[RMDB]
RNA sequence: GGGAACGACUCGAGUAGAGUCGAAAACGGAGACUGUUCGCAGUCUCCGAAAGGAGCGCGCUUUUGCGCUAAGGCCAUACGGAGAGCCGGCUCCAAAGCCGAAAAUCCGGCGGUUCGCCGCCGGAAACCUCCAUACUAAGUUCGCUUAGUAUGGAGGAAAAGAAACAACAACAACAAC
Reactivity to DMS in 0.01 (KOAc 150mM, MgCl2 10mM, bicine 150mM(pH8.5), 24C), signal-to-noise 3, nucleotides 027 to 126: c030g010g010a020g000a020c000u000g010u000u010c170g030c010a000g000u000c000u010c000c010g010a000a050a070g000g000a010g010c000g010c030g010c090u000u000u000u000g010c020g020c010u010a040a070g020g010c010c060a130u010a170c080g010g000a260g000a090g020c000c010g020g000c010u000c000c010a070a070a100g020c030c020g000a080a050a090a130u000c000c000g000g010c000g000g020u020u000c150g010c000c000g010c000c010g000g000a010a040a060
Reactivity to 2A3 in 0.01 (KOAc 150mM, MgCl2 10mM, bicine 150mM(pH8.5), 24C), signal-to-noise 3, nucleotides 027 to 126: c010g000g000a010g020a000c010u040g030u090u110c250g000c120a000g010u000c000u000c000c000g000a010a010a010g000g020a020g010c020g000c010g040c040u130u120u250u300g000c030g000c030u050a090a070g020g010c010c020a060u070a130c040g040g040a070g000a020g120c020c000g010g000c010u000c010c010a050a000a020g070c020c020g060a040a030a000a110u020c000c000g000g020c110g020g000u040u030c200g020c110c000g000c010c010g000g000a010a000a000